An RNA of 177 nucleotides, treated with DMS and 2A3 and read out base by base. Source: RMDB library OK1LIB, as collected in RNAgym. The DMS profile rests on 31,144 reads. The RNA was probed in 150 mM KOAc, 10 mM MgCl2 and 150 mM bicine (pH 8.5) at 24 C.

[RMDB]
RNA sequence: GGGAACGACUCGAGUAGAGUCGAAAACGUCGUGAACUAGCGACAAUGCCGUAGAUCUAUCGUUAUCUAACCGAAACAUCGUGACUAGUCGUAGAAUAGAACCAGGAGUGGCCGCUGACAAACAAAGACGGAAUCUCAGAUUCGUCUGAGGUUCCGUAAAAGAAACAACAACAACAAC
Reactivity to DMS in 0.01 (KOAc 150mM, MgCl2 10mM, bicine 150mM(pH8.5), 24C), signal-to-noise 9, nucleotides 027 to 126: c150g010u010c010g030u000g000a120a100c110u020a100g010c020g000a030c030a090a080u030g010c030c040g000u030a080g010a040u010c050u000a090u010c080g010u020u010a060u020c050u000a070a110c080c040g000a100a080a110c180a050u020c030g020u000g000a070c030u010a060g010u000c030g010u020a060g010a060a070u020a060g000a060a080c070c040a050g010g000a060g010u010g010g020c000c020g010c040u000g000a050c120a050a050a070c150a060a110a100g000
Reactivity to 2A3 in 0.01 (KOAc 150mM, MgCl2 10mM, bicine 150mM(pH8.5), 24C), signal-to-noise 9, nucleotides 027 to 126: c050g010u010c000g010u040g070a120a070c070u030a080g020c000g020a010c000a010a050u100g020c010c010g040u060a020g010a090u010c020u050a090u070c070g060u100u040a050u050c050u030a040a080c030c020g050a070a040a020c040a060u080c030g050u050g050a050c030u020a020g050u040c030g040u040a030g030a100a060u080a060g040a050a020c030c020a020g000g040a030g040u060g020g000c000c000g000c030u020g020a020c030a010a110a000c020a020a110a010g120